[RMDB]
RNA sequence: GGGAACGACUCGAGUAGAGUCGAAAACGUAAGACGGGGAUCAAGCGGAGUCAAACCUAAACGAGAUCGUGUGGACGCUUCGGCUUGGAGAUCGAAACACUAAAUUGAAUCAAGCUAGUUUAUUCUUCGCGUGUCUGUCCGCAGGGGGUAAAUGAAACUAUGCAUAUAAGUUCGCUUAUAUGCAUAGAAAAGAAACAACAACAACAAC
Reactivity to DMS in 0.01 (KOAc 150mM, MgCl2 10mM, bicine 150mM(pH8.5), 24C), signal-to-noise 4, nucleotides 027 to 156: c060g020u010a090a110g020a110c030g010g010g030g010a110u000c070a070a130g020c040g000g010a080g040u000c140a050a060a100c030c040u000a050a090a120c060g000a250g010a070u000c040g010u000g020u000g010g010a160c090g000c040u000u000c050g010g020c090u010u000g000g000a120g000a060u000c040g010a200a120a090c030a070c010u000a030a060a150u010u010g010a060a110u000c050a050a090g020c030u000a100g010u000u010u000a070u020u000c000u000u000c020g010c040g020u000g030u010c060u000g020u000c060c020g020c020a050g020g010g000g050g010u010a030a020a050u000g010a140a080a170
Reactivity to 2A3 in 0.01 (KOAc 150mM, MgCl2 10mM, bicine 150mM(pH8.5), 24C), signal-to-noise 7, nucleotides 027 to 156: c030g020u040a020a030g050a020c020g000g000g010g010a020u050c050a060a040g030c020g020g010a010g030u060c050a050a070a120c030c040u150a130a050a040c070g030a050g000a140u120c060g020u030g010u020g070g000a020c030g010c020u050u020c030g080g010c020u020u050g040g010a040g010a030u110c050g020a030a060a000c040a020c070u150a060a070a170u150u150g060a010a030u070c020a020a010g010c000u030a030g040u010u040u050a060u100u030c010u030u050c010g000c010g020u050g020u030c060u100g090u050c030c010g000c030a030g020g000g010g000g010u030a030a050a080u050g020a000a000a010
An RNA of 207 nucleotides, treated with DMS and 2A3 and read out base by base.
The data come from the RNA Mapping Database (RMDB), library ARCHII.
The 2A3 profile rests on 6,857 reads.
The reactions ran in a buffer of 150 mM KOAc, 10 mM MgCl2 and 150 mM bicine (pH 8.5), at 24 C.
DMS adducts were read by reverse transcription with MarathonRT.
In probing experiments dimethyl sulfate is read out at A N1 and C N3, which are open when not base-paired.